[RMDB]
Chemical mapping of a 207-nucleotide RNA with 2A3.
RNA sequence: GGGAACGACUCGAGUAGAGUCGAAAAGCAGGGUGUGCCAGAGUUGAAACUGCCGACCUUCCAGAUGGAGUUCACUAGUCUCCCCCUGGCGUAUACCUUUUUGGUUGUCAAGGCCAUUAUCACAGAGUCACUUUAGAGGACACUAGGGCUACUGUUACCCACGUAUAUGGUUCGCCAUAUACGUGGGAAAAGAAACAACAACAACAAC
Reactivity to 2A3 in 0.01 (KOAc 150mM, MgCl2 10mM, bicine 150mM(pH8.5), 24C), signal-to-noise 1, nucleotides 027 to 156: g070c000a000g000g000g000u000g000u020g000c000c000a000g000a000g030u030u180g150a170a070a120c040u170g080c040c050g000a040c000c000u100u000c050c000a140g030a180u300g060g000a020g000u110u000c120a150c150u120a130g180u140c000u010c030c000c070c000c000u000g030g000c040g000u050a120u230a200c000c000u230u070u000u030u000g000g010u010u000g010u090c030a060a000g010g010c000c040a000u170u230a030u080c000a080c020a090g000a000g010u040c000a160c170u090u070u250a060g030a150g070g050a000c040a010c090u030a090g000g000g030c010u050a040c000u160g000u000u040a050
The 2A3 profile rests on 318 reads. The RNA was probed in 150 mM KOAc, 10 mM MgCl2 and 150 mM bicine (pH 8.5) at 24 C. Reactivities are given for positions 27 through 156.